Conditions: 150 mM KOAc, 10 mM MgCl2 and 150 mM bicine (pH 8.5), 24 C. The record gives the reactivity of an RNA of 177 nucleotides to DMS. It was measured as part of the RMDB library M2PK90. The DMS profile rests on 947 reads.
[RMDB]
RNA sequence: GGGAACGACUCGAGUAGAGUCGAAAAAUACAGACUAGCCGUAGUGGCGAAGGACCUGAUAGGGUGCUGCAGAGGCCCACUAUUAGGCUAGUAUAAAAAUCUCUGCUGAAAAUAAAAAUAAAUGAAACAUGUGAGAGUUAUUCGUAACUCUCACAUGAAAAGAAACAACAACAACAAC
Reactivity to DMS in 0.01 (KOAc 150mM, MgCl2 10mM, bicine 150mM(pH8.5), 24C), signal-to-noise 1, nucleotides 027 to 126: a050u000a180c090a120g020a070c000u000a050g000c010c000g020u000a010g000u000g010g030c000g000a090a170g000g020a050c020c000u000g000a100u010a100g040g020g000u000g030c010u030g000c030a010g000a030g000g000c010c020c000a010c030u000a010u000u010a090g020g010c000u000a010g000u010a030u000a010a010a040a040a020u010c000u000c000u000g000c010u000g000a100a030a080a070u010a010a100a040a140a060u010a050a080a040u010g010a100a070a160